The data come from the RNA Mapping Database (RMDB), library TTRDES. This 177-nucleotide RNA was probed chemically with DMS. The DMS profile rests on 2,772 reads. The RNA was probed in 150 mM KOAc, 10 mM MgCl2 and 150 mM bicine (pH 8.5) at 24 C. Reactivities are given for positions 27 through 126.
RNA sequence: GGGAACGACUCGAGUAGAGUCGAAAAGAUAUGGAAACAGCAAGGGAGCUCAGACAUCGGAAACGAUGUCGAGCGACGAUCUUGUCUGUUUCCUAAGUCAAACCCCCCCUGGUUCGCCAGGGGGGGACACAUUAGCAGGGUUCGCCCUGCUAAUGUGAAAAGAAACAACAACAACAAC
Reactivity to DMS in 0.01 (KOAc 150mM, MgCl2 10mM, bicine 150mM(pH8.5), 24C), signal-to-noise 2, nucleotides 027 to 126: g000a010u000a300u000g010g000a010a010a000c000a000g000c010a020a040g010g000g010a020g040c000u010c000a110g020a010c000a010u010c010g040g000a150a090a290c000g020a000u000g020u000c010g000a010g020c010g000a020c300g000a030u010c010u000u000g000u010c010u000g000u000u000u000c010c000u000a010a060g010u000c040a070a150a210c000c010c000c000c000c000c000u000g010g020u000u010c260g030c000c000a010g010g000g000g000g000g000g030a010